[RMDB]
Overview: This 177-nucleotide RNA was probed chemically with DMS and 2A3. For 2A3, 941 sequencing reads were counted.
RNA sequence: GGGAACGACUCGAGUAGAGUCGAAAAGACACCUCCCAAGAAGGCAAAGAGAAGGCAAGAAUCGGAGGCUCUCCCUAUGACGCUGGAGACAUCCUGGAAGGGGAAAGAGGAAGGUGGAAGAAAAAGGGACUCAUAGUAACUUCGGUUACUAUGAGUCAAAAGAAACAACAACAACAAC
Reactivity to DMS in 0.01 (KOAc 150mM, MgCl2 10mM, bicine 150mM(pH8.5), 24C), signal-to-noise 2, nucleotides 027 to 126: g010a070c140a170c150c050u000c020c000c010a100a070g020a140a080g020g010c060a030a080a230g020a080g010a080a050g000g000c080a070a060g000a130a100u000c060g000g000a070g000g020c170u000c030u000c010c020c030u000a100u020g010a120c150g000c120u020g000g000a080g010a050c150a050u000c010c060u000g030g020a080a070g000g010g000g010a010a050a030g000a130g000g010a030a040g000g040u010g000g000a050a080g010a030a060a010a130a120g010g000
Reactivity to 2A3 in 0.01 (KOAc 150mM, MgCl2 10mM, bicine 150mM(pH8.5), 24C), signal-to-noise 1, nucleotides 027 to 126: g080a030c030a040c040c000u000c020c030c020a000a070g040a020a000g030g030c080a100a080a000g140a040g010a090a000g040g000c010a020a050g030a100a010u090c060g050g020a000g030g000c010u000c000u000c000c010c010u060a140u120g070a040c040g010c100u070g020g000a040g000a000c030a030u010c010c050u030g050g060a040a040g060g000g010g010a040a100a110g100a000g020g040a060a030g020g020u100g000g030a040a050g000a060a060a050a000a020g130g000